[RMDB]
Structure probing data (2A3 and DMS) for a 177-nucleotide construct.

RNA sequence: GGGAACGACUCGAGUAGAGUCGAAAAAGAUAGACCUCACAUACUGGAUUAUCAUCAUUCUCACGUGCCACAUCACUGGCUAAUGCUGUGAUCGCACAGCCAUUUUCGGCAUGGUCACGGUGGGUCGGAGUGGCGAAAGUUUCGACUUUCGCCACUCAAAAGAAACAACAACAACAAC
Reactivity to 2A3 in 0.01 (KOAc 150mM, MgCl2 10mM, bicine 150mM(pH8.5), 24C), signal-to-noise 1, nucleotides 027 to 126: a030g040a000u080a010g060a010c020c010u080c000a090c010a090u120a100c100u080g030g030a130u120u000a000u080c010a010u030c020a030u020u040c030u000c000a050c040g120u110g010c020c010a030c010a090u020c040a030c070u020g070g000c070u060a120a030u250g010c010u020g000u000g020a000u020c020g030c040a130c020a040g010c020c010a110u180u110u070u190c090g010g000c000a010u050g000g040u060c050a000c000g010g000u010g050g000g040u020c070g000
Reactivity to DMS in 0.01 (KOAc 150mM, MgCl2 10mM, bicine 150mM(pH8.5), 24C), signal-to-noise 1, nucleotides 027 to 126: a140g020a060u030a100g020a010c020c040u000c100a110c190a040u000a150c150u000g030g000a040u000u020a020u000c040a050u010c080a190u000u000c000u010c030a170c240g000u010g010c020c100a020c080a100u010c030a070c130u000g020g000c010u000a050a090u000g000c020u000g020u000g000a010u000c160g040c070a080c200a110g000c010c010a100u000u000u000u000c110g040g050c000a070u000g000g010u000c040a020c000g040g020u010g000g000g030u000c080g000

Background
The DMS profile rests on 756 reads. The reactions ran in a buffer of 150 mM KOAc, 10 mM MgCl2 and 150 mM bicine (pH 8.5), at 24 C. Values cover nucleotides 27 to 126.